[RMDB]
RNA sequence: GGGAACGACUCGAGUAGAGUCGAAAACGAACGGGAGGGCAUCGACGGCGCGGUCGGCGAUCAGGAAUCGGUGCCCGGUGCUGCCCAGGGCGCGGAAGGUGGCCCGAAUUGCCUCGAAGUGGUCCCAGUGUAUCCGAUGGUUCGCCAUCGGAUACACAAAAGAAACAACAACAACAAC
Reactivity to DMS in 0.01 (KOAc 150mM, MgCl2 10mM, bicine 150mM(pH8.5), 24C), signal-to-noise 1, nucleotides 027 to 126: c070g000a140a080c070g000g000g000a120g000g000g010c040a040u000c050g000a040c040g010g000c090g000c070g000g000u010c130g020g020c060g010a060u030c080a180g000g000a180a130u000c060g010g010u000g000c050c000c000g010g000u000g010c000u000g000c030c000c080a200g020g010g000c020g010c010g000g030a040a200g000g000u030g000g010c040c020c010g000a040a140u010u030g030c080c010u000c030g030a230a170g000u000g010g000u030c010c070c050a070